[RMDB]
Chemical mapping of a 207-nucleotide RNA with 2A3.
For 2A3 the reverse transcriptase was SuperScript II with manganese.
Conditions: 150 mM KOAc, 10 mM MgCl2 and 150 mM bicine (pH 8.5), 24 C.
RNA sequence: GGGAACGACUCGAGUAGAGUCGAAAAGGGGUCACGCGUUGAAAUCCUUCAGGCGAAGAACAUGGACUGAAGCCUCCACGGUCCAUGGGAGCCUGCGGGAUGGAGCGUGACGGAGGCACCCAAAAGGUGUAGGUCGAGUUCGCUCGACCUACACCAAGAGAUGUUUAACGUUCGCGUUAAACAUCUCAAAAGAAACAACAACAACAAC
Reactivity to 2A3 in 0.01 (KOAc 150mM, MgCl2 10mM, bicine 150mM(pH8.5), 24C), signal-to-noise 2, nucleotides 027 to 156: g020g020g070g020u020c000a010c010g010c000g170u240u060g000a010a010a010u010c000c000u010u010c000a010g020g000c020g160a300a010g000a030a010c000a000u000g010g010a000c010u040g040a080a010g010c000c010u000c000c000a020c000g000g020u020c000c000a000u010g010g020g000a010g000c000c010u000g000c030g000g000g000a010u000g000g010a030g000c000g000u010g000a000c000g000g000a000g000g000c010a010c010c000c000a030a110a000a090g000g000u000g000u000a000g000g000u000c010g000a000g020u060u130c230g090c100u010c000g010a000c000c000u000a000c000a000c000c000a000a000